[RMDB]
RNA sequence: GGGAACGACUCGAGUAGAGUCGAAAAGUCUCACGAGUGCAUAGACAAAGGUAGUUGACUCCGGGGCUACCAGUACUCGAAAGAAUGCGAAAGAGUUCACGUAUUCCAACCGGAGAAGAACUCAAAAGAUAUUAGGAGCUUUCGAGCUCCUAAUAUCAAAAGAAACAACAACAACAAC
Reactivity to DMS in 0.01 (KOAc 150mM, MgCl2 10mM, bicine 150mM(pH8.5), 24C), signal-to-noise 4, nucleotides 027 to 126: g020u010c010u010c020a300c040g000a010g040u010g030c010a160u020a140g030a220c300a160a160a130g010g010u000a000g020u010u000g020a130c000u000c010c030g010g000g010g000c000u000a010c010c000a190g000u000a030c040u000c000g010a110a110a130g000a120a030u020g000c020g010a030a140a060g000a010g040u000u000c010a300c010g010u000a010u040u020c120c070a080a140c000c010g000g000a000g000a120a050g000a030a000c030u010c000a170a080a050a080
Reactivity to 2A3 in 0.01 (KOAc 150mM, MgCl2 10mM, bicine 150mM(pH8.5), 24C), signal-to-noise 7, nucleotides 027 to 126: g070u010c010u010c010a020c000g010a010g010u020g030c020a090u170a210g140a200c110a100a130a020g020g000u000a000g000u000u010g040a070c000u000c010c000g030g000g010g000c000u000a000c000c010a000g000u000a000c000u000c000g010a020a030a030g030a040a020u120g040c070g050a090a100a110g030a050g020u040u040c020a010c050g040u030a120u100u140c100c050a160a170c000c010g000g000a000g000a000a020g000a000a000c010u000c030a040a040a010a030
Conditions: 150 mM KOAc, 10 mM MgCl2 and 150 mM bicine (pH 8.5), 24 C. The record gives the reactivity of an RNA of 177 nucleotides to DMS and 2A3. It was measured as part of the RMDB library OK1LIB. 2A3 adducts were read by reverse transcription with SuperScript II with manganese.